An RNA of 177 nucleotides, treated with 2A3 and DMS and read out base by base. It was measured as part of the RMDB library OK1LIB. As a SHAPE reagent, 2A3 marks flexible, mostly unpaired nucleotides at the ribose 2'-OH. For 2A3 the reverse transcriptase was SuperScript II with manganese. Reactivities are given for positions 27 through 126. DMS adducts were read by reverse transcription with MarathonRT. Conditions: 150 mM KOAc, 10 mM MgCl2 and 150 mM bicine (pH 8.5), 24 C. For DMS, 3,794 sequencing reads were counted.
RNA sequence: GGGAACGACUCGAGUAGAGUCGAAAAAGGAUUGUCUUCGUGAAAUUGAUGAGCCAAUCUUGGAGUCUGACUGGAUUUACUUUCAUCCUGAUGUGAGUAAGGUUUUGGACAAGUGGAAACCUGAUUCCACUGUGACCGAGUUCGCUCGGUCACAGUGAAAAGAAACAACAACAACAAC
Reactivity to 2A3 in 0.01 (KOAc 150mM, MgCl2 10mM, bicine 150mM(pH8.5), 24C), signal-to-noise 3, nucleotides 027 to 126: a000g090g010a070u050u010g050u000c020u160u070c070g200u050g090a070a120a120u180u120g050a090u070g000a000g000c020c010a030a030u000c000u020u000g000g010a030g020u040c020u000g030a060c030u030g000g070a070u070u000u000a060c000u040u010u000c000a070u080c020c070u090g090a020u060g110u050g030a010g030u040a010a050g040g010u020u010u070u030g150g050a120c080a100a060g040u030g020g010a000a030a040c040c000u010g040a120u040u080c020
Reactivity to DMS in 0.01 (KOAc 150mM, MgCl2 10mM, bicine 150mM(pH8.5), 24C), signal-to-noise 3, nucleotides 027 to 126: a020g000g000a030u030u000g020u000c050u020u020c090g010u030g000a060a090a130u050u080g000a080u020g000a090g010c130c010a000a040u000c030u000u010g000g000a090g000u000c010u020g000a180c080u000g000g010a080u010u030u020a050c040u030u000u000c040a050u010c080c130u000g000a070u020g010u030g010a020g020u010a040a050g000g010u000u010u050u030g010g000a070c160a070a080g030u010g000g000a050a030a090c080c060u030g000a170u020u000c030